[RMDB]
RNA sequence: GGGAACGACUCGAGUAGAGUCGAAAAGGGUGAGACCUAGGAACCGUAGGGGUAUUCUCAAAGGAAGCUUUUGCAGUGACGCCCAUGUAAGUGGGAUAUAACAACAGAACUAGUAUGAGUAGCCUAAUAAAUCGGACCUUCUUCGGAAGGUCCGAAACCCUUAUACUCGGUUCGCCGAGUAUAAGGGAAAAGAAACAACAACAACAAC
Reactivity to 2A3 in 0.01 (KOAc 150mM, MgCl2 10mM, bicine 150mM(pH8.5), 24C), signal-to-noise 1, nucleotides 027 to 156: g000g040g000u010g010a110g020a070c020c030u070a030g020g050a010a080c030c020g030u070a040g080g000g040g000u030a190u120u040c070u020c010a050a070a040g030g020a030a020g090c080u100u080u020u050g010c010a000g000u000g050a020c070g050c000c000c050a000u070g060u150a100a130g010u020g000g000g060a000u020a000u000a080a020c010a010a010c000a030g000a050a010c060u050a020g140u090a170u110g020a020g050u030a020g000c000c030u040a180a180u110a120a120a070u030c000g000g120a060c000c000u000u000c000u000u020c070g040g000a010a010g020g000u000c000c000g000a000a000a000